Chemical mapping of a 177-nucleotide RNA with DMS.
RNA sequence: GGGAACGACUCGAGUAGAGUCGAAAAGACGUAGUACGGCCGAUGGUCGUUGCCGUGGCGUAAAUCGUAGUUGUAGCAGACGCCCGCGCCGUUGCGCACCAUCCAGACGCUCGCGGGAUUGCCGCCACCUCCCGUAAUGGUUCGCCAUUACGGGAGGAAAAGAAACAACAACAACAAC
Reactivity to DMS in 0.01 (KOAc 150mM, MgCl2 10mM, bicine 150mM(pH8.5), 24C), signal-to-noise 1, nucleotides 027 to 126: g000a040c040g010u000a100g000u000a060c040g030g010c070c050g000a110u000g020g010u030c070g000u000u010g040c010c010g030u000g020g000c000g010u000a050a100a090u000c070g000u010a080g020u000u000g000u020a110g000c010a090g000a120c080g030c060c040c040g000c100g040c300c070g010u010u000g000c070g010c060a120c080c050a050u000c050c070a130g000a050c070g000c060u000c070g070c040g010g000g010a130u010u000g010c040c020g000c030c110a130
Conditions: 150 mM KOAc, 10 mM MgCl2 and 150 mM bicine (pH 8.5), 24 C. In probing experiments dimethyl sulfate is read out at A N1 and C N3, which are open when not base-paired. Source: RMDB library OK2TST, as collected in RNAgym.